[RMDB]
RNA sequence: GGGAACGACUCGAGUAGAGUCGAAAAGAUAUGGAUCCCACACAGCUUUUGACGGAGCUUCGGAAACGAAAACUCCGAUAAGCUGUAGGGAUCCUAAGUCAAACCGCUUUGGUUCGCCAAAGCGGAAGUCACAUGCAUAGUUCGCUAUGCAUGUGACAAAAGAAACAACAACAACAAC
Reactivity to DMS in 0.01 (KOAc 150mM, MgCl2 10mM, bicine 150mM(pH8.5), 24C), signal-to-noise 2, nucleotides 027 to 126: g000a050u010a300u010g000g000a000u000c000c000c000a140c160a050c000a000g000c000u000u000u010u000g030a190c040g000g000a000g020c170u000u000c000g010g020a050a080a120c010g000a020a010a110a220c000u000c000c010g040a180u000a000a030g000c000u000g000u000a100g030g000g020a000u000c000c010u000a010a080g010u010c030a080a120a210c010c000g000c000u000u010u000g000g010u000u010c270g010c030c010a000a020a020g000c000g020g000a030a030
Reactivity to 2A3 in 0.01 (KOAc 150mM, MgCl2 10mM, bicine 150mM(pH8.5), 24C), signal-to-noise 2, nucleotides 027 to 126: g030a010u050a020u090g010g010a010u010c000c010c010a030c010a000c000a020g010c030u220u280u290u300g240a100c020g000g000a010g020c000u000u000c000g030g020a080a060a040c010g000a000a010a020a050c000u010c010c010g010a010u040a080a030g000c020u000g000u010a030g010g010g000a000u000c000c000u010a070a000g000u000c010a030a050a130c020c000g000c020u010u000u010g100g040u080u090c300g030c140c010a000a010a000g000c000g020g000a010a010

Chemical mapping of a 177-nucleotide RNA with DMS and 2A3. The DMS profile rests on 1,510 reads. 2A3 adducts were read by reverse transcription with SuperScript II with manganese. 2A3 is a SHAPE reagent: it acylates the 2'-hydroxyl of flexible nucleotides of all four kinds.